Chemical mapping of a 177-nucleotide RNA with 2A3 and DMS. The RNA was probed in 150 mM KOAc, 10 mM MgCl2 and 150 mM bicine (pH 8.5) at 24 C. It was measured as part of the RMDB library M2PK50. DMS adducts were read by reverse transcription with MarathonRT.
RNA sequence: GGGAACGACUCGAGUAGAGUCGAAAAUCUUCGUACUUCGGUACGAAGAAAAGGCCAACCCACUGGCGGAGGUGAAACCCAGCGUGGAGGGCACCAACGCGAAAACGGGGGGCUUCGGCCCCCCGAACAGUGUUAUUACCUUCGGGUAAUAACACUGAAAAGAAACAACAACAACAAC
Reactivity to 2A3 in 0.01 (KOAc 150mM, MgCl2 10mM, bicine 150mM(pH8.5), 24C), signal-to-noise 1, nucleotides 027 to 126: u010c010u010u010c000g000u010a000c000u010u030c130g090g020u000a010c040g000a000a000g000a000a010a000a010g020g020c030c000a020a010c050c010c000a030c140u080g250g000c000g000g010a020g000g000u040g000a240a070a070c000c000c000a060g090c070g160u230g010g130a110g030g030g010c000a000c010c020a020a000c000g010c040g000a020a010a070a130c010g010g000g000g000g000g020c000u000u010c040g010g010c000c020c060c070c010c000g000a000a000
Reactivity to DMS in 0.01 (KOAc 150mM, MgCl2 10mM, bicine 150mM(pH8.5), 24C), signal-to-noise 1, nucleotides 027 to 126: u000c010u000u000c000g020u000a000c000u000u010c100g010g020u000a010c010g020a010a000g020a020a000a050a060g000g020c050c060a110a160c020c000c020a130c260u020g000g010c050g000g000a290g000g000u000g000a050a090a100c000c010c010a120g000c130g000u000g020g030a040g020g000g020c010a020c010c020a040a250c020g060c000g010a020a070a060a130c030g010g000g000g040g000g040c010u000u010c120g020g000c020c000c020c000c010c010g000a000a030